[RMDB]
RNA sequence: GGGAACGACUCGAGUAGAGUCGAAAAAGCAAAGUAAACCAGAAUGUACCCCACAAAAGUUGUAAUUUAAGCAACAAUUAAAAAUAAGCUGGUUUGGGUCCAGCAGAGACAACCUAUCAGAAACAGAAUACAUAACGUAAUUCGUUACGUUAUGUAUAAAAGAAACAACAACAACAAC
Reactivity to DMS in 0.01 (KOAc 150mM, MgCl2 10mM, bicine 150mM(pH8.5), 24C), signal-to-noise 5, nucleotides 027 to 126: a120g020c070a070a070a140g020u000a030a040a060c030c020a050g010a110a080u010g010u010a100c050c010c010c070a110c220a060a050a070a170g000u010u010g010u020a080a140u010u000u000a110a120g000c010a010a020c010a050a160u020u010a010a060a060a060a070u000a070a110g010c010u000g000g010u000u000u010g010g030g000u000c030c020a050g010c040a050g000a070g000a050c050a030a040c030c040u000a070u010c090a070g000a100a070a050c160a070g010a140
Reactivity to 2A3 in 0.01 (KOAc 150mM, MgCl2 10mM, bicine 150mM(pH8.5), 24C), signal-to-noise 4, nucleotides 027 to 126: a000g080c080a070a030a010g060u170a110a080a050c040c000a020g040a040a030u070g020u100a070c030c030c010c000a030c030a030a170a040a030g010u010u010g030u040a130a300u190u220u190a120a050g000c000a000a020c000a010a040u110u130a080a090a020a020a040u080a090a030g000c000u010g000g000u040u030u050g060g000g020u000c010c010a020g020c020a010g040a000g000a050c030a030a030c020c000u110a090u180c050a040g110a060a040a010c030a010g100a070